Source: RMDB library OK2TRN, as collected in RNAgym.
An RNA of 177 nucleotides, treated with DMS and 2A3 and read out base by base.
For 2A3 the reverse transcriptase was SuperScript II with manganese.
The RNA was probed in 150 mM KOAc, 10 mM MgCl2 and 150 mM bicine (pH 8.5) at 24 C.
The 2A3 profile rests on 8,148 reads.
The DMS profile rests on 9,394 reads.
RNA sequence: GGGAACGACUCGAGUAGAGUCGAAAAGGAUGCUACAGUUUGCCCCAUAGACAAGGACAAGAACCCUUAGAUGAGUCUGGCUGCGAGGCAGGGCGAUGGGAAGGAAGGUAGCCCCUCCGCGGAGACACGUAGUAACUUCUUUCGAGAAGUUACUACGAAAAGAAACAACAACAACAAC
Reactivity to DMS in 0.01 (KOAc 150mM, MgCl2 10mM, bicine 150mM(pH8.5), 24C), signal-to-noise 7, nucleotides 027 to 126: g010g010a090u010g010c030u010a060c050a090g000u000u000u000g010c160c010c000c030a080u010a100g020a130c150a070a060g000g010a060c060a110a140g010a110a150c120c010c010u000u010a080g010a130u000g000a110g010u000c030u000g010g000c020u000g010c200g010a100g010g000c050a070g000g000g010c040g010a070u000g010g000g000a080a090g000g010a050a050g010g000u000a060g020c020c050c010c030u010c020c030g020c110g010g000a100g010a090c170a140
Reactivity to 2A3 in 0.01 (KOAc 150mM, MgCl2 10mM, bicine 150mM(pH8.5), 24C), signal-to-noise 4, nucleotides 027 to 126: g040g010a060u150g020c010u040a040c020a090g010u040u080u080g060c010c010c000c000a060u070a030g040a020c050a050a030g040g000a030c060a140a130g050a100a060c010c000c010u050u060a080g020a130u140g050a040g070u000c020u050g060g010c020u020g030c040g040a050g010g040c020a020g030g030g000c040g040a060u060g000g010g040a050a040g060g020a040a020g030g010u020a020g000c000c010c000c010u020c020c020g050c060g050g040a050g010a020c080a000